[RMDB]
RNA sequence: GGGAACGACUCGAGUAGAGUCGAAAAGAUAUGGACGUUACAGGGAGCUGCUCGGAAACGAGGCAGCGAAGAACUGUUGCGUCCUAAGUCAAAGCGAAGGUGUUAACUUCGGUUAACACCUUCGCAACCUAUGACAAAUGUUCGCAUUUGUCAUAGGAAAAGAAACAACAACAACAAC
Reactivity to 2A3 in 0.01 (KOAc 150mM, MgCl2 10mM, bicine 150mM(pH8.5), 24C), signal-to-noise 3, nucleotides 027 to 126: g040a010u070a050u170g000g000a000c000g000u030u030a000c010a000g010g030g010a020g000c000u000g000c010u010c020g030g050a050a080a060c020g040a070g300g050c010a000g000c020g020a050a010g020a010a010c000u010g010u030u010g000c010g000u000c000c000u000a010a010g010u000c050a070a050a040g000c000g000a000a000g000g000u000g000u010u010a010a000c000u060u100c260g000g000u000u010a000a000c000a000c010c010u000u000c000g000c000a000a000
Reactivity to DMS in 0.01 (KOAc 150mM, MgCl2 10mM, bicine 150mM(pH8.5), 24C), signal-to-noise 5, nucleotides 027 to 126: g000a030u000a300u010g010g010a010c000g010u000u010a010c010a010g000g000g000a100g020c010u000g000c010u000c000g000g000a100a060a210c020g010a040g020g010c000a000g010c000g010a050a100g010a100a200c010u000g000u000u000g000c000g000u000c000c000u000a010a070g010u000c030a090a120a130g000c010g000a010a000g010g000u010g000u000u000a010a000c000u000u020c190g020g020u000u000a000a010c000a000c000c000u000u000c000g000c000a000a020